Structure probing data (2A3) for a 207-nucleotide construct. 2A3 adducts were read by reverse transcription with SuperScript II with manganese. The reactions ran in a buffer of 150 mM KOAc, 10 mM MgCl2 and 150 mM bicine (pH 8.5), at 24 C. It was measured as part of the RMDB library OK3TST. For 2A3, 383 sequencing reads were counted. 2A3 is a SHAPE reagent: it acylates the 2'-hydroxyl of flexible nucleotides of all four kinds.
[RMDB]
RNA sequence: GGGAACGACUCGAGUAGAGUCGAAAAUCAAUGGAGAGCUUACUGUAGUAGGAGCUAGACCAAAGGUGGGUAAAUCAACAGUCUUACUCAAUUGGAGCAAAAAGAUAUGUCAUGAAGAUGGUAUACCUCUUUUGUACAUCGACACAGAGAAUUAUACCUGAUCAUGCCCAUUCGUGGGCAUGAUCAGAAAAGAAACAACAACAACAAC
Reactivity to 2A3 in 0.01 (KOAc 150mM, MgCl2 10mM, bicine 150mM(pH8.5), 24C), signal-to-noise 1, nucleotides 027 to 156: u090c010a000a080u010g070g020a010g000a020g070c000u160u170a140c060u120g050u190a060g000u000a040g000g090a010g010c050u080a070g110a050c010c000a050a050a050g040g000u050g030g030g050u120a100a100a010u100c050a020a050c000a070g000u000c030u000u060a040c010u120c030a140a040u150u110g020g050a140g000c020a100a000a000a000a000g060a030u050a010u110g040u040c060a030u010g070a060a060g120a100u070g000g000u020a000u040a090c000c000u040c100u050u000u110u090g070u110a130c000a020u060c160g080a000c000a000c000a080g050a000g070a040a000u130u000a000u000a120c000